Chemical mapping of a 207-nucleotide RNA with 2A3. For 2A3, 731 sequencing reads were counted.
RNA sequence: GGGAACGACUCGAGUAGAGUCGAAAAGUGAACGAUCUCGGUUGUUUCUCUGAAGGCAUGAUCACCCCGUCCGAUGCGGAAGUUCGUGCUUCCGUCGGACGCGAAAGUCGGACGGCGGCCAUGAGUCAAUAUGUUUAAGGCUUCGGCCUUAAACAAACCAAGAAACGAGUUUCGACUCGUUUCUUGGAAAAGAAACAACAACAACAAC
Reactivity to 2A3 in 0.01 (KOAc 150mM, MgCl2 10mM, bicine 150mM(pH8.5), 24C), signal-to-noise 1, nucleotides 027 to 156: g110u050g090a060a040c080g060a100u000c000u050c070g000g000u000u010g020u010u000u000c100u000c070u030g090a070a050g090g000c010a000u010g000a040u060c050a020c040c000c000c000g010u000c010c000g000a000u060g000c000g010g010a000a010g010u130u300c160g120u300g100c000u000u000c000c000g040u010c080g050g060a050c030g010c000g020a020a010a000g060u010c000g020g000a000c000g000g000c140g020g030c040c000a000u020g000a010g060u030c020a020a060u100a060u270g000u000u000u000a000a000g000g000c000u030u030c080g160g000c000c020u000u000a000a000a000c000a000a000a000
Reactivities are given for positions 27 through 156.
The RNA was probed in 150 mM KOAc, 10 mM MgCl2 and 150 mM bicine (pH 8.5) at 24 C.